Annotation:
This 177-nucleotide RNA was probed chemically with 2A3. The reactions ran in a buffer of 150 mM KOAc, 10 mM MgCl2 and 150 mM bicine (pH 8.5), at 24 C.

RNA sequence: GGGAACGACUCGAGUAGAGUCGAAAAUUCCGGUCGCCACCCACGCCUCCGGCAUACCGACCGUCGACGUGGUGAUGACACAACUACAUGCCGGCGGCAAGUUCGACUCGGACGCGUAUGCGAUAUCACUCGGUCGUGUGUUCGCACACGACCGAGUAAAAGAAACAACAACAACAAC
Reactivity to 2A3 in 0.01 (KOAc 150mM, MgCl2 10mM, bicine 150mM(pH8.5), 24C), signal-to-noise 2, nucleotides 027 to 126: u080u000c000c000g000g000u000c030g010c030c030a090c020c050c000a050c130g060c000c020u050c000c000g020g000c000a100u120a090c020c130g070a050c080c000g110u040c050g000a070c100g070u130g000g000u040g050a090u160g120a000c060a000c010a110a120c080u070a050c000a020u040g020c000c000g000g000c030g000g000c000a000a000g000u020u030c040g070a130c090u130c160g000g000a010c000g010c010g080u150a060u150g010c000g020a070u090a040u170c040